[RMDB]
Conditions: 150 mM KOAc, 10 mM MgCl2 and 150 mM bicine (pH 8.5), 24 C. The record gives the reactivity of an RNA of 207 nucleotides to DMS and 2A3.
RNA sequence: GGGAACGACUCGAGUAGAGUCGAAAAUUGCGAUGCCGCGCCCACUCAUUCCGAUGGUACACGGCCAAGUCGGCGCGGCCGUCGAACCUUUUGGCACGCAACAGGGAAAGACAGGGAGAACUGGUUUGGUUGAGCACAGGAAGCCGCAGGUCCACCCGGUACUACUAUCUUUCGAGAUAGUAGUACCAAAAGAAACAACAACAACAAC
Reactivity to DMS in 0.01 (KOAc 150mM, MgCl2 10mM, bicine 150mM(pH8.5), 24C), signal-to-noise 2, nucleotides 027 to 156: u000u010g020c050g000a080u000g020c020c010g030c010g020c040c010c010a060c040u010c050a230u010u000c060c030g010a140u010g020g010u000a100c110a190c040g040g020c220c250a090a070g020u000c120g050g020c000g020c010g020g030c030c020g010u000c020g000a060a110c060c050u000u030u010u000g030g000c050a080c000g000c020a070a050c070a130g010g030g040a070a060a160g020a050c090a070g000g030g020a110g130a060a080c030u010g020g000u000u000u000g010g020u010u000g000a110g030c050a060c050a100g000g000a070a100g020c050c040g000c050a050g020g000u000c000c010a100c060c060c050
Reactivity to 2A3 in 0.01 (KOAc 150mM, MgCl2 10mM, bicine 150mM(pH8.5), 24C), signal-to-noise 4, nucleotides 027 to 156: u130u180g030c010g020a020u050g000c010c000g030c000g000c010c000c000a000c000u030c010a090u220u090c020c020g080a130u100g090g120u150a110c120a050c060g020g010c020c010a060a020g020u020c010g000g000c000g000c000g010g000c010c010g000u000c000g000a080a080c000c000u060u090u130u120g070g000c040a020c060g030c010a080a060c030a070g030g000g040a030a110a080g040a060c050a070g040g000g010a080g030a050a060c050u060g020g030u070u090u050g030g010u050u090g040a010g030c020a010c010a080g040g010a040a010g030c040c020g030c060a030g020g040u010c010c010a020c060c000c000